[RMDB]
RNA sequence: GGGAACGACUCGAGUAGAGUCGAAAACCAAGGGGACAGUCCCUCGGCAAUGGCAAAGGGAACCCAAAAAUCUCUCUAAAUUCCAAUAAAAAAUCAAAAGAAAACGGGUUCUCCCUUACCCAUCCAAGAUUAUCAAUUACUUCGGUAAUUGAUAAUCAAAAGAAACAACAACAACAAC
Reactivity to 2A3 in 0.01 (KOAc 150mM, MgCl2 10mM, bicine 150mM(pH8.5), 24C), signal-to-noise 2, nucleotides 027 to 126: c000c000a020a020g020g000g020g020a020c040a110g300u300c010c000c000u020c010g020g000c030a070a050u010g010g000c020a020a030a110g040g000g020a020a040c050c000c000a060a080a000a000a010u050c020u030c010u010c020u060a080a170a180u180u090c030c000a100a140u260a200a190a050a040a030a080u150c060a090a090a030a040g000a040a020a010a000c030g000g000g050u050u000c060u040c040c000c010u000u030a020c010c010c000a030u170c000c000a030a000
Reactivity to DMS in 0.01 (KOAc 150mM, MgCl2 10mM, bicine 150mM(pH8.5), 24C), signal-to-noise 2, nucleotides 027 to 126: c000c020a130a020g020g000g010g020a180c160a160g020u020c020c000c000u000c110g030g000c070a100a040u000g000g000c100a070a050a160g000g020g000a050a010c050c000c000a030a110a050a130a120u000c050u010c030u000c040u010a050a170a090u010u000c050c060a030a040u100a010a020a080a050a030a010u000c050a060a090a110a080g000a010a020a030a050c200g000g000g010u000u020c140u010c020c000c010u020u000a140c210c020c060a050u010c010c090a070a100
The record gives the reactivity of an RNA of 177 nucleotides to 2A3 and DMS. Source: RMDB library VIROID, as collected in RNAgym. 2A3 adducts were read by reverse transcription with SuperScript II with manganese.